[RMDB]
An RNA of 177 nucleotides, treated with DMS and read out base by base.
Conditions: 150 mM KOAc, 10 mM MgCl2 and 150 mM bicine (pH 8.5), 24 C.
It was measured as part of the RMDB library OK2TST.
RNA sequence: GGGAACGACUCGAGUAGAGUCGAAAAGGGUGGCACUGCAUAUGGAAAAAAGAUGGACGAUGGAGGCCGGAAGCCUAAGGCGAGGUUUUUCGCAAAGGGUUUCCUUGACGGCCGUCUGGUUAACACCGCUGAGUGCAUUAUUCGUAAUGCACUCAGCAAAAGAAACAACAACAACAAC
Reactivity to DMS in 0.01 (KOAc 150mM, MgCl2 10mM, bicine 150mM(pH8.5), 24C), signal-to-noise 1, nucleotides 027 to 126: g000g020g010u010g000g020c030a080c030u000g030c060a040u000a050u030g010g000a000a090a070a080a040a080g010a070u010g000g010a050c030g000a120u010g010g000a160g010g050c060c080g010g000a020a030g020c020c010u000a070a220g000g000c000g000a000g000g000u000u000u000u000u000c020g000c030a000a030a300g000g000g010u000u000u000c010c040u010u010g000a120c110g020g020c020c030g020u010c020u000g010g030u010u000a060a080c100a100c120c150